[RMDB]
RNA sequence: GGGAACGACUCGAGUAGAGUCGAAAAGAGGUGGUAAUCUGAUAGGAGGCUGAGAAGUCUUAAGGUAAUUUAUCGUCUAAUUGCAUCUGGUUUAAGUACCUAUCAGAUCUUAGACUAGAUGAAGAUAGUAUGUGGUAGUAUUCGUACUAUCACAUACAAAAGAAACAACAACAACAAC
Reactivity to DMS in 0.01 (KOAc 150mM, MgCl2 10mM, bicine 150mM(pH8.5), 24C), signal-to-noise 9, nucleotides 027 to 126: g010a050g000g010u010g000g010u020a060a050u000c010u000g000a030u010a030g020g000a040g000g000c020u000g010a200g000a130a030g010u000c020u010u010a100a100g010g020u020a050a080u030u020u020a030u010c060g000u010c050u010a060a070u020u030g000c020a010u000c000u000g000g000u000u000u000a010a010g010u010a100c040c020u010a050u010c070a030g010a050u020c010u000u000a010g000a000c000u000a010g000a010u010g010a070a080g000a090u020a110
Reactivity to 2A3 in 0.01 (KOAc 150mM, MgCl2 10mM, bicine 150mM(pH8.5), 24C), signal-to-noise 9, nucleotides 027 to 126: g070a020g010g040u090g020g030u060a040a030u020c010u010g000a000u010a020g030g010a000g010g000c010u010g030a020g030a120a010g020u010c000u070u100a090a040g100g020u060a090a130u070u090u100a090u080c050g070u010c070u120a110a120u160u220g050c010a000u000c000u000g010g000u000u000u010a020a020g010u040a050c010c000u030a040u040c010a010g010a030u010c000u000u000a000g000a000c000u000a000g000a000u020g010a030a020g040a050u110a050
Record summary
An RNA of 177 nucleotides, treated with DMS and 2A3 and read out base by base. The DMS profile rests on 69,667 reads. In probing experiments dimethyl sulfate is read out at A N1 and C N3, which are open when not base-paired. DMS adducts were read by reverse transcription with MarathonRT.